[RMDB]
RNA sequence: GGGAACGACUCGAGUAGAGUCGAAAAGAUAUGGAACUGUAGGGAGUUGACAAUCGGAAACGAUUGCCAACAUCGAUCUAUUUCCUAAGUCAAAAGGAUGGUAAGAGCUUCGGCUCUUACCAUCCAAUCAGUUAAGUAGCUUCGGCUACUUAACUGAAAAAGAAACAACAACAACAAC
Reactivity to DMS in 0.01 (KOAc 150mM, MgCl2 10mM, bicine 150mM(pH8.5), 24C), signal-to-noise 3, nucleotides 027 to 126: g010a040u000a220u020g000g000a020a020c300u000g010u000a010g010g000g000a010g020u000u000g000a010c000a000a000u000c000g000g000a100a060a080c010g000a000u000u000g010c010c000a000a000c000a140u010c120g010a100u010c000u000a060u000u000u000c010c000u000a030a070g010u000c030a080a070a090a100g000g010a010u000g000g010u000a000a000g000a010g000c000u000u010c290g030g010c000u000c000u000u000a000c000c000a000u000c000c000a010a010